[RMDB]
Structure probing data (2A3 and DMS) for a 177-nucleotide construct. For 2A3 the reverse transcriptase was SuperScript II with manganese. The RNA was probed in 150 mM KOAc, 10 mM MgCl2 and 150 mM bicine (pH 8.5) at 24 C. Source: RMDB library M2PK50, as collected in RNAgym. High DMS reactivity at an A or C suggests that its Watson-Crick edge is free.
RNA sequence: GGGAACGACUCGAGUAGAGUCGAAAAUUCAGAGCCUUCGGGCUCUGAACCGUUUUCCUUGUUGCCAUUAUUGGUAACUCGGUAAUAAAAGGAAAGUUGCCGCAACUUGUUCGUUCGCGAACAAGAACAAUGAGGUAACCUUCGGGUUACCUCAUUGAAAAGAAACAACAACAACAAC
Reactivity to 2A3 in 0.01 (KOAc 150mM, MgCl2 10mM, bicine 150mM(pH8.5), 24C), signal-to-noise 1, nucleotides 027 to 126: u010u010c000a010g000a020g000c000c010u060u090c220g110g000g010c000u010c000u000g000a000a000c000c010g020u050u040u020u060c010c000u000u060g030u040u050g040c000c020a130u160u180a070u100u300g040g000u000a010a000c010u040c090g030g030u050a090a130u130a070a260a020a010g050g060a050a070a010g050u060u030g100c020c030g000c040a010a090c040u020u030g000u020u010c000g000u010u050c210g010c010g050a010a010c040a020a000g000a010a010
Reactivity to DMS in 0.01 (KOAc 150mM, MgCl2 10mM, bicine 150mM(pH8.5), 24C), signal-to-noise 2, nucleotides 027 to 126: u010u000c010a010g000a010g000c000c010u000u010c200g050g020g010c000u000c000u000g000a000a030c020c060g000u010u000u000u000c000c000u020u000g010u010u000g000c000c000a030u000u000a220u010u010g010g000u000a000a000c010u010c060g020g000u000a060a050u010a020a070a090a090g000g000a040a060a140g000u000u000g010c050c020g020c300a060a120c010u000u000g010u010u000c000g010u000u000c190g000c000g000a020a010c000a000a000g010a130a160